[RMDB]
RNA sequence: GGGAACGACUCGAGUAGAGUCGAAAACUUGACGUGUACCAAUGCCUGCACUUCAACAAGCGGGUAGUCACAGUGUACACCAUUAAUACCCUGGGGCACACCAAGGACCGCGGGUUUGACGUCCACGGAUAGUACUUAUCUUCGGAUAAGUACUAUCAAAAGAAACAACAACAACAAC
Reactivity to 2A3 in 0.01 (KOAc 150mM, MgCl2 10mM, bicine 150mM(pH8.5), 24C), signal-to-noise 9, nucleotides 027 to 126: c020u050u090g060a060c050g010u020g010u040a070c010c010a030a070u070g010c010c000u000g010c020a090c010u160u170c130a150a130c040a140a090g010c020g000g050g000u010a030g040u070c060a020c030a150g070u080g000u140a010c020a020c030c010a080u110u160a120a060u100a160c010c020c000u020g000g020g020g000c040a020c000a010c080c040a060a060g050g000a040c030c020g020c050g050g010g000u060u040u070g050a040c030g010u000c010c010a030c030g070
Reactivity to DMS in 0.01 (KOAc 150mM, MgCl2 10mM, bicine 150mM(pH8.5), 24C), signal-to-noise 9, nucleotides 027 to 126: c090u000u000g020a150c180g030u010g010u000a040c020c040a130a120u000g000c000c010u000g000c010a090c130u010u010c260a080a120c300a110a080g010c030g000g000g020u000a030g010u010c120a070c150a070g000u000g010u000a020c020a030c030c060a050u010u000a080a110u010a120c080c050c040u000g000g000g010g010c050a050c050a070c050c050a070a090g000g000a070c050c040g010c070g000g000g010u000u000u000g000a100c130g000u000c020c050a080c160g010